[RMDB]
RNA sequence: GGGAACGACUCGAGUAGAGUCGAAAACCCCGCUCCAUCACACCAGCUGGCCCUCUUUGCUUCCUUUUCCCAGAAUCGUUAAGCCCCGACUCCCACUAGCACCUCGUACCAACCUCGCCCCACCCCAAACACUUGUAAGAUUCGUCUUACAAGUGUUAAAAGAAACAACAACAACAAC
Reactivity to DMS in 0.01 (KOAc 150mM, MgCl2 10mM, bicine 150mM(pH8.5), 24C), signal-to-noise 9, nucleotides 027 to 126: c040c010c010c090g010c040u010c020c030a060u010c070a090c070a090c060c060a080g010c040u000g000g010c020c010c010u000c030u000u010u010g010c050u000u010c020c010u000u010u010u000c010c000c010a150g010a090a070u020c080g010u010u020a100a150g020c040c010c010c020g010a090c060u000c020c020c010a080c100u010a080g010c050a050c040c020u000c060g020u010a060c060c030a060a090c050c010u000c050g010c020c000c010c020a150c020c000c000c030a090
Reactivity to 2A3 in 0.01 (KOAc 150mM, MgCl2 10mM, bicine 150mM(pH8.5), 24C), signal-to-noise 9, nucleotides 027 to 126: c000c000c000c000g010c010u030c010c010a070u060c020a020c010a030c040c020a020g040c030u060g040g010c010c010c000u030c000u030u050u060g030c020u040u040c010c000u030u050u030u030c010c000c010a020g070a050a070u080c050g040u060u110a070a030g010c010c000c000c010g030a030c020u020c010c010c000a040c030u020a010g010c010a020c010c010u040c020g030u030a040c010c010a040a040c000c000u010c010g010c000c000c000c000a040c000c010c000c000a010